[RMDB]
RNA sequence: GGGAACGACUCGAGUAGAGUCGAAAAGAUAUGGAGUUGCCACUUUUGACGAACGGUAAUACUUUGGUAUAGCUCGGAAACGAGCUAUACCAAAGUGCCAGUUCGAUAAGUGGGCAACUCCUAAGUCGUCCAUUAGUAAGUUCGCUUACUAAUGGACAAAAGAAACAACAACAACAAC
Reactivity to DMS in 0.01 (KOAc 150mM, MgCl2 10mM, bicine 150mM(pH8.5), 24C), signal-to-noise 4, nucleotides 027 to 126: g010a070u020a300u010g010g010a020g010u000u000g020c000c000a010c010u000u010u020u010g000a160c150g010a010a010c010g000g000u000a110a130u010a140c010u000u010u000g000g020u000a010u010a000g010c020u000c010g010g000a090a120a280c000g000a000g000c010u010a000u010a000c000c010a010a000a000g060u000g000c010c000a160g030u000u000c000g010a100u000a000a000g010u000g000g020g020c000a000a000c000u010c000c000u000a020a120g000u010c120
Reactivity to 2A3 in 0.01 (KOAc 150mM, MgCl2 10mM, bicine 150mM(pH8.5), 24C), signal-to-noise 3, nucleotides 027 to 126: g080a000u100a110u300g000g010a010g000u010u010g020c000c000a040c020u100u120u160u300g300a170c050g000a000a000c020g010g020u060a230a090u150a300c000u050u010u020g000g000u010a000u000a010g020c000u000c030g040g000a170a040a000c000g000a020g000c010u000a000u000a000c000c000a000a010a000g000u000g000c000c000a020g000u000u000c010g000a020u010a020a000g020u270g110g000g000c000a000a000c000u000c000c000u010a010a010g010u010c080

Source: RMDB library TTRINS, as collected in RNAgym. This 177-nucleotide RNA was probed chemically with DMS and 2A3. For 2A3, 7,357 sequencing reads were counted. DMS adducts were read by reverse transcription with MarathonRT. The RNA was probed in 150 mM KOAc, 10 mM MgCl2 and 150 mM bicine (pH 8.5) at 24 C.